[RMDB]
RNA sequence: GGGAACGACUCGAGUAGAGUCGAAAAAUACUUCUCAGGAUGGCGCGUUGCAGUCCAACAAGAUCCAGGGACUGUACAGAAUUUUCCUAUACCUCGAGUCGGGUUUGGAAUCUAAGGUUGACUAGCUAAAACUUUACGUGGUUCGCCACGUAAAGAAGCUACUUGAUAUGUUCGCAUAUCAAGUAGCAAAAGAAACAACAACAACAAC
Reactivity to 2A3 in 0.01 (KOAc 150mM, MgCl2 10mM, bicine 150mM(pH8.5), 24C), signal-to-noise 3, nucleotides 027 to 156: a000u150a020c010u050u020c020u000c030a020g070g000a040u030g050g080c040g010c040g130u090u080g010c030a020g000u000c000c010a030a050c050a180a130g090a120u080c100c040a030g030g000g010a000c000u000g010u010a010c000a020g130a120a110u050u020u000u080c020c000u030a050u080a120c000c020u010c020g010a000g000u030c030g050g000g000u090u100u040g050g020a080a030u030c030u100a070a110g070g040u030u030g070a130c050u050a050g030c040u080a090a030a010a040c000u020u000u000a000c000g000u000g000g040u030u000c050g040c060c000a000c000g000u000a000a000a000g000a000a000
Reactivity to DMS in 0.01 (KOAc 150mM, MgCl2 10mM, bicine 150mM(pH8.5), 24C), signal-to-noise 1, nucleotides 027 to 156: a120u000a040c050u010u020c040u000c020a190g040g010a040u000g000g030c100g000c070g050u010u000g040c030a060g000u000c000c030a090a130c000a090a210g010a090u020c040c000a180g010g000g010a010c040u000g020u000a080c110a200g010a100a080u010u010u000u000c000c040u000a070u000a110c100c040u000c000g000a050g040u000c000g010g040g000u010u010u000g010g000a100a090u010c040u010a030a040g010g000u020u080g010a130c060u010a090g000c030u000a040a050a110a220c030u000u010u000a020c000g020u010g030g030u010u030c300g030c010c000a000c000g020u000a010a010a010g020a090a110